[RMDB]
RNA sequence: GGGAACGACUCGAGUAGAGUCGAAAAUAUGCCUCAAAGCCAUGUUUGAUGCCUAGAGUGUGAAAGACAGAAAAUGCCUGGUGAUCAAGAUGAGGCCUGGUCUGGCAGUCCCCACAGCAGGAGGGAAGCACAGUUGCUCUAGAGUGGGCUACACCCAAUAUUAUCGAGUGUUCGCACUCGAUAAUAUAAAAGAAACAACAACAACAAC
Reactivity to 2A3 in 0.01 (KOAc 150mM, MgCl2 10mM, bicine 150mM(pH8.5), 24C), signal-to-noise 3, nucleotides 027 to 156: u180a060u050g010c010c010u060c040a070a060a010g020c020c020a060u080g090u060u060u060g090a040u090g000c000c000u040a050g020a020g070u080g010u030g100a130a090a030g080a030c060a020g160a040a090a020a030u120g030c000c010u060g070g030u070g050a030u020c040a010a040g030a080u090g030a020g050g000c000c030u040g000g000u010c000u020g010g000c010a030g090u020c020c010c010c020a070c030a030g130c010a010g000g090a030g030g030g010a050a010g000c030a020c010a120g050u100u090g020c010u000c010u030a040g010a020g100u060g000g030g000c000u020a020c030a030c030c000c010a010
Reactivity to DMS in 0.01 (KOAc 150mM, MgCl2 10mM, bicine 150mM(pH8.5), 24C), signal-to-noise 3, nucleotides 027 to 156: u010a070u020g010c040c010u010c040a060a140a190g020c050c060a090u000g000u000u000u000g020a140u000g020c000c030u000a090g000a130g010u000g050u010g000a100a070a150g010a110c050a120g000a110a050a130a110u000g000c040c040u010g030g060u000g010a100u010c050a080a090g010a130u000g030a100g020g010c030c050u000g020g030u000c070u020g010g000c010a090g010u010c030c000c010c050a140c080a090g010c050a060g030g000a110g020g010g000a100a150g010c030a030c030a130g010u010u000g000c010u010c080u000a110g020a070g030u000g000g010g050c020u010a070c100a300c000c000c000a060
Overview: Structure probing data (2A3 and DMS) for a 207-nucleotide construct. For DMS, 4,117 sequencing reads were counted. The 2A3 profile rests on 1,879 reads. The reactions ran in a buffer of 150 mM KOAc, 10 mM MgCl2 and 150 mM bicine (pH 8.5), at 24 C. Reactivities are rounded to 0.1 and cut off at 0 and 3. Reactivities are given for positions 27 through 156. DMS adducts were read by reverse transcription with MarathonRT. Source: RMDB library OK3TST, as collected in RNAgym.